RNA sequence: GGGAACGACUCGAGUAGAGUCGAAAACGAUCAGAUAUCCAGAGUGAUCAGAUACCGAGGGUGGGAGGUUCUGGCUAAACUGACUGAGCAAGGUUUUUUGCUAAAACUGGAUUUUACAAGGAAAUGCCGAAUUAGAGCUAUUCGUAGCUCUAAUUCGAAAAGAAACAACAACAACAAC
Reactivity to 2A3 in 0.01 (KOAc 150mM, MgCl2 10mM, bicine 150mM(pH8.5), 24C), signal-to-noise 2, nucleotides 027 to 126: c030g010a080u060c020a030g070a130u070a020u120c020c020a020g020a020g110u050g020a110u050c010a010g010a070u130a050c020c020g020a080g050g040g030u170g030g010g010a040g000g000u050u020c010u040g000g020c030u060a070a070a070c030u040g090a020c030u060g040a000g020c020a010a020g070g000u080u110u010u030u140u130g000c010u030a030a030a050a050c020u020g010g010a000u050u070u070u110a090c070a060a040g070g040a140a130a030u110g060c050
Reactivity to DMS in 0.01 (KOAc 150mM, MgCl2 10mM, bicine 150mM(pH8.5), 24C), signal-to-noise 5, nucleotides 027 to 126: c110g010a090u000c060a090g010a170u010a050u000c030c030a050g010a220g020u010g010a070u000c020a070g010a100u010a070c050c030g010a140g010g000g020u010g000g000g000a160g010g010u010u010c030u010g010g000c050u000a050a060a080c050u010g010a110c100u000g010a110g010c040a040a120g010g010u000u010u020u000u010u000g020c100u000a040a050a050a090c040u000g000g000a090u000u000u000u010a080c140a070a100g000g010a060a070a080u010g030c160